[RMDB]
RNA sequence: GGGAACGACUCGAGUAGAGUCGAAAAUAAAUCAGCGUACAGCACACUCAGACUGUACGCUAUCUGAGUGUGUCAACUUCAAAGUCCAACGACACACACAAGGCGUUGGAACAAGAGUGUGAGAAAAAGUAGUGUAGGCUUUCGAGCCUACACUACUAAAAGAAACAACAACAACAAC
Reactivity to 2A3 in 0.01 (KOAc 150mM, MgCl2 10mM, bicine 150mM(pH8.5), 24C), signal-to-noise 1, nucleotides 027 to 126: u160a000a080a060u140c070a040g060c050g050u040a030c030a030g010c000a000c000a020c020u000c010a020g080a130c050u090g090u170a060c120g020c030u000a000u000c010u000g030a030g040u000g020u000g050u050c020a000a010c010u090u070c060a080a070a070g070u050c020c020a030a030c020g070a070c000a010c000a000c030a000c030a190a040g090g000c000g000u030u000g000g040a030a010c000a090a010g010a010g060u050g000u040g040a050g040a060a090a030a000
Reactivity to DMS in 0.01 (KOAc 150mM, MgCl2 10mM, bicine 150mM(pH8.5), 24C), signal-to-noise 1, nucleotides 027 to 126: u020a000a070a040u000c080a030g030c060g000u000a070c070a170g050c000a040c000a020c000u010c000a150g000a090c060u000g000u000a060c170g010c040u000a040u000c010u000g060a000g030u000g000u000g000u010c080a190a110c040u000u000c050a090a210a160g010u040c010c030a000a010c060g000a060c040a060c040a070c190a090c300a030a040g020g010c010g000u000u080g020g020a020a020c070a030a150g000a030g000u000g000u000g000a100g000a040a020a100a060